[RMDB]
RNA sequence: GGGAACGACUCGAGUAGAGUCGAAAAUUCUCAGAAUCCAGCGAGAGGCGUGGAGAGAGGGCCGCGGUGCUCUGGAGUAGAGGCUCUGCCUUCGAAACACCAUCGAUCGUCCCUUCUUCUUUACCUUAUGAUGAUAUACGUUCGCGUAUAUCAUCAUAAAAGAAACAACAACAACAAC
Reactivity to 2A3 in 0.01 (KOAc 150mM, MgCl2 10mM, bicine 150mM(pH8.5), 24C), signal-to-noise 2, nucleotides 027 to 126: u020u010c030u010c000a040g110a060a090u060c090c060a030g040c070g090a190g020a030g220g030c060g020u040g000g010a020g000a010g020a020g020g010g000c010c010g020c020g000g030u010g010c000u000c000u000g020g000a000g000u000a010g000a020g000g030c040u060c150u300g030c010c000u080u130c000g000a010a000a000c010a010c110c000a010u010c000g030a300u030c010g010u000c000c000c000u040u020c000u020u010c010u000u070u080a060c010c020u040u000
Reactivity to DMS in 0.01 (KOAc 150mM, MgCl2 10mM, bicine 150mM(pH8.5), 24C), signal-to-noise 2, nucleotides 027 to 126: u000u010c000u010c000a200g010a090a120u020c050c060a090g000c100g020a140g010a050g000g010c060g020u010g000g000a020g010a070g010a050g000g020g010c140c020g010c020g020g020u000g020c000u000c010u000g000g010a070g000u000a070g000a020g000g000c010u040c210u020g030c040c000u000u030c000g000a170a100a100c020a010c140c000a010u000c010g030a140u000c030g010u000c000c000c000u000u000c030u000u000c010u000u010u010a090c050c060u000u000